About this RNA:
An RNA of 177 nucleotides, treated with 2A3 and DMS and read out base by base. For 2A3, 645 sequencing reads were counted.
[RMDB]
RNA sequence: GGGAACGACUCGAGUAGAGUCGAAAAGUGGAGAUGACUCUUUACUGUUAUCUCGGGAACGCAUCGAACUAGAUUCUUUUGUCUACGAAUAUCAUUUCGGUUUCGAUGUGAAAUUCUACGGACAAGCUCUUGAAGAGGCUUUCGAGCCUCUUCAAGAAAAAGAAACAACAACAACAAC
Reactivity to 2A3 in 0.01 (KOAc 150mM, MgCl2 10mM, bicine 150mM(pH8.5), 24C), signal-to-noise 1, nucleotides 027 to 126: g080u050g010g000a000g000a070u120g110a070c000u020c050u070u170u160a080c030u070g060u090u060a050u020c030u000c010g000g060g010a130a040c040g000c050a070u060c050g050a020a030c110u120a120g030a200u120u160c080u060u300u080u180g090u000c020u040a050c040g020a020a020u080a050u100c020a020u010u000u070c040g080g090u130u130u300c010g000a000u000g000u020g000a000a000a000u000u060c020u030a120c130g000g000a020c010a010a050g000c020
Reactivity to DMS in 0.01 (KOAc 150mM, MgCl2 10mM, bicine 150mM(pH8.5), 24C), signal-to-noise 2, nucleotides 027 to 126: g000u000g000g000a000g000a020u000g020a050c040u000c150u000u000u000a080c150u000g020u010u000a070u000c010u010c040g000g010g000a060a100c080g050c120a010u000c070g020a050a060c300u000a040g000a090u000u010c120u000u000u000u000g000u000c010u000a260c160g000a020a000u000a100u000c050a030u000u010u000c020g020g020u000u010u010c000g020a010u010g010u000g010a010a070a060u000u000c010u020a090c240g020g000a020c040a050a060g020c270

Source: RMDB library OK2TRN, as collected in RNAgym. The DMS profile rests on 1,132 reads.